[RMDB]
RNA sequence: GGGAACGACUCGAGUAGAGUCGAAAACUCGGUUAAUUCGUUAACCGAGACUUCUUAAACAUCUUUUCAACACAUAGAUGGUAAAUAUUCAAAGUUGUUCGAAUGCGAUAAACUUCGGUUUAUCGAAUAGUUGGAUAAGGUUCGCCUUAUCCAACUAAAAAGAAACAACAACAACAAC
Reactivity to 2A3 in 0.01 (KOAc 150mM, MgCl2 10mM, bicine 150mM(pH8.5), 24C), signal-to-noise 2, nucleotides 027 to 126: c000u000c000g010g000u000u000a000a000u020u060c110g000u070u000a010a000c010c000g010a000g010a000c010u090u060c010u020u190a140a140a060c020a000u080c000u030u140u000u070c070a100a130c020a030c020a150u030a050g040a040u030g020g050u110a030a150a120u270a050u060u100c030a040a050a150g000u010u010g000u000u010c010g090a130a050u190g010c010g010a000u000a010a000a000c000u030u030c080g100g000u020u000u000a020u030c000g020a020a020
Reactivity to DMS in 0.01 (KOAc 150mM, MgCl2 10mM, bicine 150mM(pH8.5), 24C), signal-to-noise 2, nucleotides 027 to 126: c020u000c000g000g000u000u020a000a030u020u040c150g020u000u000a000a000c000c000g000a000g000a040c070u000u000c020u000u030a110a130a080c010a010u000c020u010u000u010u000c060a040a110c250a130c300a040u000a040g000a060u010g010g000u000a050a110a140u000a030u010u010c080a110a090a070g020u000u000g000u010u000c100g000a040a080u010g030c000g010a010u010a010a000a010c000u000u050c210g020g000u000u000u000a000u000c000g000a090a090
Annotation: The record gives the reactivity of an RNA of 177 nucleotides to 2A3 and DMS. The RNA was probed in 150 mM KOAc, 10 mM MgCl2 and 150 mM bicine (pH 8.5) at 24 C. It was measured as part of the RMDB library M2PK50. For 2A3, 1,140 sequencing reads were counted. For DMS the reverse transcriptase was MarathonRT.